[RMDB]
RNA sequence: GGGAACGACUCGAGUAGAGUCGAAAAUCUGCCAUGCCGCAAAAUGGGUGACAACAUGUGAUUUCAGGUGGUAUGGGCCGAAAUACAUCACUCAUUCAAUACAUCAUCUGAGACCGACAACAUCAGAGCUCAGAGCAAAAUUCGUUUUGCUCUGAGCAAAAGAAACAACAACAACAAC
Reactivity to 2A3 in 0.01 (KOAc 150mM, MgCl2 10mM, bicine 150mM(pH8.5), 24C), signal-to-noise 4, nucleotides 027 to 126: u010c000u020g060c020c000a050u090g010c010c020g140c110a060a000a000a040u030g010g000g050u040g030a020c060a180a010c020a110u090g040u060g160a140u040u110u090c080a100g000g050u050g020g090u190a130u160g020g050g000c000c000g020a020a020a000u110a010c020a020u050c010a030c020u020c030a030u120u020c020a010a090u050a100c010a060u070c000a020u010c020u030g010a010g040a030c040c100g080a050c040a080a000c010a090u070c010a010g000a050
Reactivity to DMS in 0.01 (KOAc 150mM, MgCl2 10mM, bicine 150mM(pH8.5), 24C), signal-to-noise 1, nucleotides 027 to 126: u000c070u000g010c230c000a010u000g000c000c020g000c030a040a170a250a070u010g010g000g030u000g000a080c270a010a110c260a190u000g010u000g000a100u000u000u000c080a250g000g030u000g000g000u000a080u020g010g020g000c090c000g010a000a010a050u000a030c030a120u000c060a020c000u000c000a000u000u030c180a100a110u000a110c080a000u050c110a090u050c060u000g000a040g000a090c000c030g000a190c190a050a060c260a090u000c100a140g000a140